[RMDB]
RNA sequence: GGGAACGACUCGAGUAGAGUCGAAAAUGAAAGAGUUUCCUUAAACCUAUAUGGAAGCAAAGAUCAAGAAUACAACCUUCCCAUAUGGUUGACUUAAUUAUUCCCUAGGUUCCUGGAAGCUAAAAAAUAAUACGUAGUAAUUCGUUACUACGUAUUAAAAAGAAACAACAACAACAAC
Reactivity to DMS in 0.01 (KOAc 150mM, MgCl2 10mM, bicine 150mM(pH8.5), 24C), signal-to-noise 5, nucleotides 027 to 126: u010g010a090a110a140g010a060g010u000u000u000c010c020u000u000a050a040a010c010c020u000a030u000a100u020g010g000a020a030g020c200a090a090a110g000a030u000c050a030a040g010a110a140u000a120c040a030a060c080c000u000u000c080c030c070a130u010a040u010g010g000u000u000g010a080c030u000u000a020a040u000u000a070u000u000c000c010c150u000a040g010g000u000u000c040c070u000g010g010a030a020g010c030u020a000a020a070a070a050a070
Reactivity to 2A3 in 0.01 (KOAc 150mM, MgCl2 10mM, bicine 150mM(pH8.5), 24C), signal-to-noise 3, nucleotides 027 to 126: u200g050a040a040a060g160a000g000u000u020u000c000c000u010u050a040a030a000c000c030u040a040u020a060u260g010g010a010a030g040c150a130a040a040g090a030u080c050a020a040g070a270a040u170a160c010a030a010c010c000u040u060c050c020c020a040u060a030u110g020g000u020u010g010a010c010u010u000a010a030u080u090a070u080u040c000c000c000u010a030g010g000u000u050c020c020u010g010g010a000a000g000c010u040a070a110a050a000a020a020

Overview
The record gives the reactivity of an RNA of 177 nucleotides to DMS and 2A3. DMS adducts were read by reverse transcription with MarathonRT. The RNA was probed in 150 mM KOAc, 10 mM MgCl2 and 150 mM bicine (pH 8.5) at 24 C. 2A3 adducts were read by reverse transcription with SuperScript II with manganese. The 2A3 profile rests on 4,126 reads.